Conditions: 150 mM KOAc, 10 mM MgCl2 and 150 mM bicine (pH 8.5), 24 C. Structure probing data (DMS and 2A3) for a 170-nucleotide construct. It was measured as part of the RMDB library 15KLIB.
RNA sequence: GGGAACGACUCGAGUAGAGUCGAAAAAUAGGCUUAUCAAGAGAGGUGGAGCGACUGGCCCGAUGAAACCCGGCAGCCAGAAAUGGUGCCGAUUCCUGCAGCGGAAACGUUGAAAGAUGAGCCGAUGACAUCAUGUCGUUCGCGACAUGAAAAAGAAACAACAACAACAAC
Reactivity to DMS in 0.01 (KOAc 150mM, MgCl2 10mM, bicine 150mM(pH8.5), 24C), signal-to-noise 8, nucleotides 027 to 129: a060u030a090g000g030c000u020u020a010u010c020a100a080g000a100g000a050g010g000u020g000g000a100g030c000g010a070c070u000g000g000c060c010c030g020a060u000g000a040a070a050c090c100c030g030g000c050a060g030c010c010a010g000a070a070a110u010g020g020u020g010c000c000g020a100u000u000c010c040u030g010c010a060g030c020g020g020a090a070a080c020g030u000u000g010a100a090a110g010a030u000g020a000g010c000c030g000a070u020g010a060c170a100
Reactivity to 2A3 in 0.01 (KOAc 150mM, MgCl2 10mM, bicine 150mM(pH8.5), 24C), signal-to-noise 9, nucleotides 027 to 129: a000u150a020g000g000c000u030u020a010u060c060a130a020g100a000g000a010g110g010u100g020g040a110g030c000g040a050c030u040g040g000c000c000c020g030a060u150g050a050a050a030c030c000c000g000g020c030a040g130c000c000a010g020a020a060a020u090g020g010u050g000c000c000g000a000u040u010c000c010u020g020c010a010g020c010g030g000a050a040a010c030g020u040u030g060a120a080a040g010a010u020g000a000g010c000c000g010a050u080g040a010c010a060